[RMDB]
RNA sequence: GGGAACGACUCGAGUAGAGUCGAAAAGAUAUGGACACUAUCUGCCUUGGAUUUAGUUUCGGAAACGAAACUUGUCAGGACCCAGAAAUGUGUCCUAAGUCAAAACGGGACCGUUCGCGGUCCCGAAUCUUACCACGGAGUUCGCUCCGUGGUAAGAAAAAGAAACAACAACAACAAC
Reactivity to 2A3 in 0.01 (KOAc 150mM, MgCl2 10mM, bicine 150mM(pH8.5), 24C), signal-to-noise 1, nucleotides 027 to 126: g040a010u020a060u130g000g010a030c010a000c020u000a030u040c010u040g050c030c010u010u150g150g030a090u300u300u200a020g010u010u020u000c040g040g030a140a070a070c000g010a010a010a000c040u000u030g000u020c000a010g090g030a090c000c090c050a000g010a000a170a030u150g000u000g000u000c010c010u000a090a020g090u040c010a000a010a050a300c010g000g040g000a010c050c000g040u000u060c300g010c000g110g000u000c000c000c000g000a020a010
Reactivity to DMS in 0.01 (KOAc 150mM, MgCl2 10mM, bicine 150mM(pH8.5), 24C), signal-to-noise 1, nucleotides 027 to 126: g000a050u010a300u000g030g000a050c010a020c000u000a300u000c000u000g010c210c010u000u010g010g010a010u010u000u000a010g000u000u000u010c000g010g010a070a090a220c010g000a000a000a000c000u000u000g020u010c000a020g000g000a050c080c260c110a000g000a020a150a100u000g000u000g010u010c000c000u010a020a060g000u010c050a070a020a100a190c020g010g000g000a010c000c000g030u010u040c300g010c020g000g020u000c000c000c000g010a000a010
Conditions: 150 mM KOAc, 10 mM MgCl2 and 150 mM bicine (pH 8.5), 24 C.
The record gives the reactivity of an RNA of 177 nucleotides to 2A3 and DMS.
The 2A3 profile rests on 1,028 reads.
Values cover nucleotides 27 to 126.